[RMDB]
RNA sequence: GGGAACGACUCGAGUAGAGUCGAAAACGCAGUAUACUGCCACGUGUGUGAGAAUACUUUUAGUACAAGCGAGUACACGCAGUAUAGUGCCACUUGUGUGAGAAUACUUUUAGUACAAGCGAGUACAUCACCUUCCUCAGUUCGCUGAGGAAGGUGAAAAAGAAACAACAACAACAAC
Reactivity to DMS in 0.01 (KOAc 150mM, MgCl2 10mM, bicine 150mM(pH8.5), 24C), signal-to-noise 1, nucleotides 027 to 126: c250g000c000a000g000u000a020u000a070c010u000g010c150c300a170c060g000u000g040u000g000u000g000a300g040a120a110u050a040c210u000u000u050u040a010g000u000a000c240a030a080g000c040g010a280g000u110a000c060a010c080g000c120a000g000u000a000u000a040g000u000g000c020c150a000c090u000u000g030u000g080u000g000a000g000a120a070u000a000c100u000u000u050u000a200g000u050a000c000a050a030g030c040g000a230g000u000a010c120a260
Reactivity to 2A3 in 0.01 (KOAc 150mM, MgCl2 10mM, bicine 150mM(pH8.5), 24C), signal-to-noise 2, nucleotides 027 to 126: c020g000c000a010g030u010a000u010a040c000u000g060c060c080a130c040g040u050g020u000g000u010g010a100g020a080a020u050a090c000u110u000u080u300a030g010u000a000c000a070a020g030c010g020a000g000u000a000c040a000c040g000c010a000g020u000a000u000a000g120u080g010c050c030a100c050u090u070g060u050g030u010g070a110g110a150a000u090a110c000u050u170u110u250a040g050u010a000c030a050a060g050c010g030a010g000u040a010c000a020
The record gives the reactivity of an RNA of 177 nucleotides to DMS and 2A3. For 2A3, 1,164 sequencing reads were counted. Reactivities are given for positions 27 through 126.